[RMDB]
Structure probing data (DMS and 2A3) for a 177-nucleotide construct. For DMS, 1,995 sequencing reads were counted. The data come from the RNA Mapping Database (RMDB), library OK2TST. The RNA was probed in 150 mM KOAc, 10 mM MgCl2 and 150 mM bicine (pH 8.5) at 24 C. The 2A3 profile rests on 893 reads.
RNA sequence: GGGAACGACUCGAGUAGAGUCGAAAACAGGGAAAGAGGAAAGAGUGAAGAGUGCAUUGGUGGCUCUCCUUUUUGGGAGUGGAGCUAAAAGACAGUAACAUGGAAAUAUUGCCUUGCUUUGCUGCACUAUCACAACAGGCUUCGGCCUGUUGUGAUAAAAAGAAACAACAACAACAAC
Reactivity to DMS in 0.01 (KOAc 150mM, MgCl2 10mM, bicine 150mM(pH8.5), 24C), signal-to-noise 2, nucleotides 027 to 126: c100a100g000g000g000a050a050a070g020a100g020g000a060a000a060g020a080g000u010g010a040a080g010a060g010u000g020c050a070u010u010g010g000u010g030g010c020u000c020u000c020c010u000u000u010u020u020g010g010g020a030g050u000g000g000a120g000c030u020a030a030a040a050g010a080c040a020g000u000a040a080c100a090u000g010g010a070a080a120u000a040u010u010g010c030c010u000u000g000c090u000u000u000g020c070u000g000c020a080c090
Reactivity to 2A3 in 0.01 (KOAc 150mM, MgCl2 10mM, bicine 150mM(pH8.5), 24C), signal-to-noise 1, nucleotides 027 to 126: c020a010g000g000g100a060a090a060g050a040g020g030a090a010a000g120a000g020u120g010a040a060g030a070g000u110g000c060a070u020u050g060g030u040g150g000c000u050c010u000c000c000u060u160u060u110u220g080g030g000a020g020u080g010g000a020g060c020u010a060a040a040a030g060a030c020a010g000u000a070a010c020a040u150g080g130a080a180a030u180a080u040u140g050c040c020u020u000g000c070u040u040u090g050c000u070g020c000a040c050